[RMDB]
RNA sequence: GGGAACGACUCGAGUAGAGUCGAAAACGCUCGCGUAACGCACUCAAGCACGACGACCGGGCUGACGCCCUCGAAGGUGCCGUGCGCAAGUGGCUUGCUCAGAUCGCCAUCGACCAAGAGAAGCAGAUCGAGAAGAUCGAGAACGCCAAGUGGAAGAAUAUACAAAGCCUUUCGAGGCUUUGUAUAUAAAAGAAACAACAACAACAAC
Reactivity to 2A3 in 0.01 (KOAc 150mM, MgCl2 10mM, bicine 150mM(pH8.5), 24C), signal-to-noise 1, nucleotides 027 to 156: c050g070c020u030c050g000c010g080u060a110a050c020g000c020a000c000u130c040a080a090g030c000a020c040g100a000c060g070a060c050c130g000g000g000c070u090g060a080c160g000c000c020c000u030c010g070a030a070g100g010u010g020c000c040g040u020g010c000g010c020a020a060g040u040g010g000c030u010u050g050c010u000c040a120g010a030u010c000g060c130c030a050u010c030g040a050c040c080a180a030g060a040g000a210a020g030c110a060g050a210u040c000g000a010g000a100a030g000a020u010c030g000a000g030a040a000c010g020c020c000a070a030g060u080g020g060a050a060g080a160
Reactivity to DMS in 0.01 (KOAc 150mM, MgCl2 10mM, bicine 150mM(pH8.5), 24C), signal-to-noise 1, nucleotides 027 to 156: c070g000c020u000c030g030c040g020u010a080a110c120g000c030a070c020u000c050a120a300g000c030a030c020g020a220c060g010a130c040c090g000g020g000c000u010g040a200c300g080c010c000c000u020c030g010a100a070g000g010u000g000c030c040g060u000g000c040g030c040a030a070g020u020g000g020c020u010u000g000c020u010c020a150g030a080u000c010g000c040c040a150u020c040g010a080c000c010a140a210g020a150g040a150a100g020c130a170g030a040u000c010g020a100g040a150a060g010a050u030c000g020a120g040a030a020c040g010c010c040a090a110g010u020g000g020a040a120g020a210
This 207-nucleotide RNA was probed chemically with 2A3 and DMS.
High 2A3 reactivity points to a flexible backbone, as in loops and unpaired stretches.
High DMS reactivity at an A or C suggests that its Watson-Crick edge is free.
The RNA was probed in 150 mM KOAc, 10 mM MgCl2 and 150 mM bicine (pH 8.5) at 24 C.